[RMDB]
RNA sequence: GGGAACGACUCGAGUAGAGUCGAAAAGGAAAGAAACAGCCUAGUUAUGAGAGAGACUUGCAACUGGGGGCACCCUAGCACCCCACGGAGGCAUUUCCAGGUGGCCCCUCCAGCUUGGCUGUGUGGGGCAGCGCUGUAGAUUCGUCUACAGCGCUGCAAAAGAAACAACAACAACAAC
Reactivity to DMS in 0.01 (KOAc 150mM, MgCl2 10mM, bicine 150mM(pH8.5), 24C), signal-to-noise 4, nucleotides 027 to 126: g000g000a080a090a070g010a130a130a070c050a060g010c020c010u000a030g010u000u010a080u000g000a110g000a120g000a130g000a040c030u000u010g020c060a050a130c060u000g000g000g010g000g010c040a070c070c060c050u010a080g010c060a190c030c000c010c030a030c150g010g000a120g000g020c040a060u000u000u000c030c030a110g020g030u020g010g000c020c030c010c000u000c020c020a040g000c010u010u000g030g010c010u000g000u000g020u000g000g000g000
Reactivity to 2A3 in 0.01 (KOAc 150mM, MgCl2 10mM, bicine 150mM(pH8.5), 24C), signal-to-noise 1, nucleotides 027 to 126: g050g050a070a020a020g040a030a190a000c020a010g000c020c010u020a020g010u100u090a170u250g050a080g010a010g010a000g000a160c030u060u100g020c060a050a040c050u040g000g010g000g000g010c020a030c020c050c000u040a030g000c020a300c010c020c000c010a010c020g050g030a040g090g060c010a010u050u010u080c010c010a030g140g030u030g100g040c020c010c000c000u000c000c000a020g010c000u090u150g010g000c000u000g040u030g010u030g040g050g030
This 177-nucleotide RNA was probed chemically with DMS and 2A3. DMS adducts were read by reverse transcription with MarathonRT. Source: RMDB library OK2TST, as collected in RNAgym.